[RMDB]
RNA sequence: GGGAACGACUCGAGUAGAGUCGAAAAACGAAAACUACGCACUCGCAGCUUAAUAACCUGCGCUGAGCCCUUCUCCCCCAGCUUGCCUGUGUCCUAGGGAAUUGGAAGGUCAUACUUCACAGGAUCGUCUAGGUAAUCCCUUUCGAGGGAUUACCAAGUAAUUUCUUUUGUUCGCAAAAGAAAUUACAAAAGAAACAACAACAACAAC
Reactivity to 2A3 in 0.01 (KOAc 150mM, MgCl2 10mM, bicine 150mM(pH8.5), 24C), signal-to-noise 3, nucleotides 027 to 156: a000c070g050a060a030a010a040c080u200a040c060g000c040a060c020u020c040g020c000a010g000c000u050u030a050a030u040a040a040c000c000u010g040c030g030c140u020g030a040g030c020c000c020u050u050c080u110c050c000c020c000c000a010g010c020u010u090g010c010c000u010g000u000g030u050c000c030u010a030g030g030g040a050a070u060u140g040g010a010a010g000g040u040c010a040u060a150c110u050u060c040a020c000a050g030g000a040u060c050g040u060c140u080a040g000g000u000a000a000u000c020c000c010u020u010u020c100g070a000g010g000g000a000u000u000a000c000c000a000a000
Reactivity to DMS in 0.01 (KOAc 150mM, MgCl2 10mM, bicine 150mM(pH8.5), 24C), signal-to-noise 1, nucleotides 027 to 156: a100c070g010a080a100a090a050c050u000a060c010g030c090a100c100u000c040g030c040a030g040c030u010u010a200a130u030a150a120c170c000u000g010c010g030c180u000g020a030g000c030c040c040u000u000c030u000c030c000c000c000c040a060g010c040u000u000g000c020c030u000g010u000g020u000c030c030u010a080g000g020g000a130a140u000u000g010g000a060a080g020g000u000c110a140u010a070c040u010u000c060a110c070a080g000g010a110u010c070g000u000c040u000a090g000g010u000a000a030u000c000c000c000u000u000u000c210g010a050g040g010g000a060u000u000a000c000c010a020a120